RNA sequence: GGGAACGACUCGAGUAGAGUCGAAAAGAUAUGGAGUCUAUCUGUAGAUGUAGGCUUUUGACGAUCGAGGUGUCGGAAACGACACGUAGAUCGAUAAGCCUACAUCUACAGUAAGGACUCCUAAGUCGCCUUUCAAUAUCUUCGGAUAUUGAAAGGCAAAAGAAACAACAACAACAAC
Reactivity to DMS in 0.01 (KOAc 150mM, MgCl2 10mM, bicine 150mM(pH8.5), 24C), signal-to-noise 1, nucleotides 027 to 126: g020a060u040a300u000g020g020a030g010u000c000u000a300u010c000u020g000u000a000g010a010u000g000u010a020g000g000c000u000u010u000u000g000a230c150g010a020u000c020g020a240g000g000u000g000u000c000g010g000a100a090a250c000g000a000c000a000c000g010u000a300g000a010u000c000g000a150u000a010a040g000c020c000u010a000c000a000u000c010u000a010c000a020g020u010a010a160g010g010a020c000u000c010c000u000a020a060g000u010c140